[RMDB]
An RNA of 177 nucleotides, treated with 2A3 and read out base by base. The RNA was probed in 150 mM KOAc, 10 mM MgCl2 and 150 mM bicine (pH 8.5) at 24 C.
RNA sequence: GGGAACGACUCGAGUAGAGUCGAAAAAGGUAUGCAGAACUUCUAGGAAGAGUCAGAUACAUGUGGAAACUGAUAGAUGGUUUCUUCCCUGCACUCGGGAAUCCAACUUAUCAAAUUGUAGCCAUGCCGGGCCGUCACUAUUCGUAGUGACGGCCCGAAAAGAAACAACAACAACAAC
Reactivity to 2A3 in 0.01 (KOAc 150mM, MgCl2 10mM, bicine 150mM(pH8.5), 24C), signal-to-noise 1, nucleotides 027 to 126: a080g090g010u090a030u010g120c050a010g030a100a000c070u240u000c100u030a000g140g000a030a040g060a080g290u000c000a010g010a120u220a100c030a070u300g000u190g010g000a000a300a000c000u030g010a060u060a060g210a130u100g000g000u000u220u000c000u060u100c000c060c000u000g090c000a000c030u040c000g000g000g000a000a000u000c000c000a000a000c070u150u100a120u180c150a000a000a300u130u070g010u010a010g000c000c000a090u120g010c000
The 2A3 profile rests on 287 reads.